[RMDB]
Record summary
An RNA of 177 nucleotides, treated with DMS and read out base by base. Reactivities are given for positions 27 through 126. Values are in units of 0.01, from 0 to 300, in steps of 10. The RNA was probed in 150 mM KOAc, 10 mM MgCl2 and 150 mM bicine (pH 8.5) at 24 C.
RNA sequence: GGGAACGACUCGAGUAGAGUCGAAAAUACAAGAAGGGGGGACGGAGAAGGCUAUGUUGGCCCGGCGACGGUUGUCCCGGUUUAAGCGUGUAGGCUGGUUUUCCAGGCAAAUCCGGAAGAAAAUGAACCUAGGUAAGUACUUCGGUACUUACCUAGGAAAAGAAACAACAACAACAAC
Reactivity to DMS in 0.01 (KOAc 150mM, MgCl2 10mM, bicine 150mM(pH8.5), 24C), signal-to-noise 2, nucleotides 027 to 126: u000a110c090a070a090g020a080a120g000g020g000g010g000g000a040c070g000g000a080g010a070a090g010g010c010u010a040u010g000u000u000g010g000c130c010c020g000g020c140g020a070c100g010g000u020u010g000u010c040c010c030g030g000u000u000u000a070a070g010c050g020u010g020u020a040g000g040c010u000g000g010u000u010u000u000c000c040a110g000g000c100a040a070a120u010c040c020g010g010a060a100g010a050a080a050a080u000g020a110a170